[RMDB]
RNA sequence: GGGAACGACUCGAGUAGAGUCGAAAACUCACCGGUGGGGAACCCCAUACGGCAACGGCGUAGAAGUAAAUGCUAACCAAUCCGUGGUAUCUACGCGACGGAGCAUCCACGGAUAACUCUAACAAGGCUAAGCGUCUCGGUUUCGACCGAGACGCAACGGAAUAUAGCAGUUCGCUGCUAUAUUCCGAAAAGAAACAACAACAACAAC
Reactivity to 2A3 in 0.01 (KOAc 150mM, MgCl2 10mM, bicine 150mM(pH8.5), 24C), signal-to-noise 2, nucleotides 027 to 156: c020u010c030a000c000c000g020g020u010g010g000g000g110a080a080c080c030c010c010a030u170a250c040g000g010c040a110a020c030g000g000c000g000u020a010g030a090a000g020u100a040a040a040u100g000c040u070a100a110c070c080a080a060u010c000c000g010u050g000g000u040a020u000c000u020a010c020g020c020g070a070c100g090g010a020g000c020a000u000c020c000a000c020g000g000a000u010a010a020c020u000c020u210a110a090c090a090a070g130g020c060u180a130a100g000c000g020u010c000u000c000g000g020u040u130u110c190g060a060c020c000g000a000g010a000c000g020c000a010a000
The record gives the reactivity of an RNA of 207 nucleotides to 2A3. The 2A3 profile rests on 1,075 reads. Source: RMDB library M2RFPK, as collected in RNAgym. For 2A3 the reverse transcriptase was SuperScript II with manganese.